Chemical mapping of a 177-nucleotide RNA with DMS and 2A3. For 2A3 the reverse transcriptase was SuperScript II with manganese. Values cover nucleotides 27 to 126. For 2A3, 19,606 sequencing reads were counted. Reactivities are rounded to 0.1 and cut off at 0 and 3.
RNA sequence: GGGAACGACUCGAGUAGAGUCGAAAAGAUAUGGAUCCACUUACUCGAUGAGAUGUGGGUUUACGAAAUUAUGUCGGAAACGACAUAAUUUCGCAAUCCACAUCGAGAGUAAUUGGAUCCUAAGUCACAGUAACAGUAGGUUCGCCUACUGUUACUGAAAAGAAACAACAACAACAAC
Reactivity to DMS in 0.01 (KOAc 150mM, MgCl2 10mM, bicine 150mM(pH8.5), 24C), signal-to-noise 6, nucleotides 027 to 126: g010a060u000a300u020g000g010a010u000c000c000a010c150u000u000a000c000u000c000g020a220u020g020a300g000a020u000g030u000g000g000g010u000u000u010a090c020g000a010a010a010u000u000a000u000g010u000c000g020g010a120a080a240c020g010a010c000a000u000a000a000u000u000u000c000g030c300a020a000u000c000c000a010c000a000u000c010g000a070g000a020g010u000a000a000u000u000g000g000a010u000c000c000u000a000a070g010u000c040a270
Reactivity to 2A3 in 0.01 (KOAc 150mM, MgCl2 10mM, bicine 150mM(pH8.5), 24C), signal-to-noise 5, nucleotides 027 to 126: g040a010u070a030u160g000g000a000u010c000c000a000c030u000u000a010c000u020c060g300a300u230g110a100g010a150u010g020u010g000g080g060u100u110u160a100c030g000a000a000a000u000u000a000u010g010u000c030g030g020a080a060a090c010g010a010c000a010u000a000a000u000u010u000c000g000c000a000a000u000c000c010a000c000a000u000c010g000a010g000a000g000u000a000a000u000u000g000g010a000u000c000c000u000a010a010g010u000c010a010